[RMDB]
RNA sequence: GGGAACGACUCGAGUAGAGUCGAAAAGGUGAAGCGGUGCGAAAGCGCCGUGGAGGCCCGCAGGGGUGUUGAUGUGCAAAUCGCUCCUCUGACCCCCGUCUAGGGGUGAAAGUCCAAUCGAGCCCGGCAAGAUUUCGGAAUUCGUUCCGAAAUCUUGAAAAGAAACAACAACAACAAC
Reactivity to DMS in 0.01 (KOAc 150mM, MgCl2 10mM, bicine 150mM(pH8.5), 24C), signal-to-noise 4, nucleotides 027 to 126: g010g010u010g010a300a140g010c000g000g010u000g000c000g000a090a090a220g030c010g000c000c000g000u000g010g000a230g020g010c000c010c060g000c050a030g000g000g000g000u000g000u030u020g020a020u010g000u040g030c200a100a150a020u010c010g000c000u000c000c010u010c050u000g000a170c040c030c010c030c070g000u020c110u040a080g000g000g000g010u010g000a040a120a130g010u000c070c010a110a100u020c040g010a120g010c010c000c010g010g030
Reactivity to 2A3 in 0.01 (KOAc 150mM, MgCl2 10mM, bicine 150mM(pH8.5), 24C), signal-to-noise 2, nucleotides 027 to 126: g030g000u050g010a020a000g000c000g000g000u020g000c010g060a140a050a030g010c020g000c000c000g000u000g000g000a010g020g060c000c000c010g000c000a010g000g020g010g020u020g040u180u260g080a030u040g090u120g110c080a050a150a060u020c000g000c020u010c000c000u010c010u030g040a060c000c000c010c010c000g030u060c190u250a090g000g020g020g000u020g030a080a040a010g050u030c050c000a030a060u040c040g010a030g010c020c010c000g000g020
About this RNA
An RNA of 177 nucleotides, treated with DMS and 2A3 and read out base by base. For DMS the reverse transcriptase was MarathonRT. The reactions ran in a buffer of 150 mM KOAc, 10 mM MgCl2 and 150 mM bicine (pH 8.5), at 24 C. 2A3 adducts were read by reverse transcription with SuperScript II with manganese.